The record gives the reactivity of an RNA of 177 nucleotides to DMS.
In probing experiments dimethyl sulfate is read out at A N1 and C N3, which are open when not base-paired.
For DMS, 1,305 sequencing reads were counted.
DMS adducts were read by reverse transcription with MarathonRT.
Values cover nucleotides 27 to 126.
The RNA was probed in 150 mM KOAc, 10 mM MgCl2 and 150 mM bicine (pH 8.5) at 24 C.
RNA sequence: GGGAACGACUCGAGUAGAGUCGAAAAAAUAAGCAAAGGCCCCAUCAUUCAGAGGACAUUCUAAAUGACACCAUGGCACUCUAGCAUUGUUUUAUAUUGGGGAUAUCCAACUGCUAUAAACUAGUGCACAAUGUUAACCGUUCGCGGUUAACAUUGUAAAAGAAACAACAACAACAAC
Reactivity to DMS in 0.01 (KOAc 150mM, MgCl2 10mM, bicine 150mM(pH8.5), 24C), signal-to-noise 1, nucleotides 027 to 126: a050a030u000a040a090g010c050a030a070a160g010g000c020c050c020c030a120u010c050a040u010u000c040a020g030a060g000g020a090c200a080u020u020c050u000a040a040a040u000g000a070c160a040c080c040a120u000g000g000c030a030c050u010c080u000a030g020c010a020u000u000g030u000u010u010u000a050u000a070u030u010g010g000g020g030a210u000a050u010c080c030a030a110c170u010g010c050u000a040u010a060a030a070c090u000a000g010u000g020c070